[RMDB]
Structure probing data (2A3 and DMS) for a 177-nucleotide construct. 2A3 adducts were read by reverse transcription with SuperScript II with manganese. It was measured as part of the RMDB library VIROID. For 2A3, 2,028 sequencing reads were counted.

RNA sequence: GGGAACGACUCGAGUAGAGUCGAAAACACCUCCAGAGGACCCCUUCAGCGAACAGAGAACCCUGACACGCGAGGAGUAAGAUCGUAGCGAUGGGGGGAGAUGCUAGGAGUUAGAGGAGACCGAAGCCGAAUAUAGAAGGUUCGCCUUCUAUAUUCGAAAAGAAACAACAACAACAAC
Reactivity to 2A3 in 0.01 (KOAc 150mM, MgCl2 10mM, bicine 150mM(pH8.5), 24C), signal-to-noise 2, nucleotides 027 to 126: c010a020c010c010u020c050c030a080g080a180g280g080a190c040c020c010c000u060u060c030a040g010c020g050a060a050c030a060g120a020g010a160a050c020c000c000u010g110a080c020a010c140g070c040g020a040g010g010a020g020u030a030a050g040a080u040c010g020u030a000g000c010g040a100u080g000g010g000g010g030g020a050g020a000u130g030c000u040a050g000g030a010g010u010u010a040g020a030g020g000a050g010a020c000c020g060a030a000g120c040
Reactivity to DMS in 0.01 (KOAc 150mM, MgCl2 10mM, bicine 150mM(pH8.5), 24C), signal-to-noise 3, nucleotides 027 to 126: c110a170c100c030u000c030c080a140g010a140g030g000a130c060c030c010c020u000u010c070a050g000c010g000a130a160c070a090g000a120g000a160a160c010c030c000u000g020a130c120a070c030g030c060g020a120g030g000a030g020u000a080a140g000a160u000c040g000u010a230g000c020g010a050u000g010g000g010g000g000g000a070g000a090u010g000c040u000a090g000g010a130g000u010u010a050g020a090g000g000a090g000a170c020c030g000a040a090g010c180

Conditions: 150 mM KOAc, 10 mM MgCl2 and 150 mM bicine (pH 8.5), 24 C.